Source information
Structure probing data (2A3) for a 177-nucleotide construct. For 2A3, 498 sequencing reads were counted. Reactivities are given for positions 27 through 126.
RNA sequence: GGGAACGACUCGAGUAGAGUCGAAAAUGAACUCGACAUCCGAUUCCCUCCAGUCUCAGAUACCGGUGCAACUAGCGCAUAGUCGAUCUCCACUGGAAACUGGAUCCGUCCCAGUGGAGACCGACCUCAGUCGCGCGCUGUUCGCAGCGCGCGACUGAAAAGAAACAACAACAACAAC
Reactivity to 2A3 in 0.01 (KOAc 150mM, MgCl2 10mM, bicine 150mM(pH8.5), 24C), signal-to-noise 1, nucleotides 027 to 126: u130g000a000a010c000u070c070g030a000c020a070u030c100c000g230a300u000u000c070c000c000u050c000c000a000g040u010c010u000c030a010g000a110u070a140c010c030g000g040u030g090c020a110a080c070u140a040g010c010g000c140a130u170a060g010u000c000g010a010u000c000u060c000c000a000c010u000g000g000a020a030a010c000u170g070g080a190u060c030c000g010u000c000c000c000a000g000u000g020g030a000g000a000c000c000g010a000c000c000u020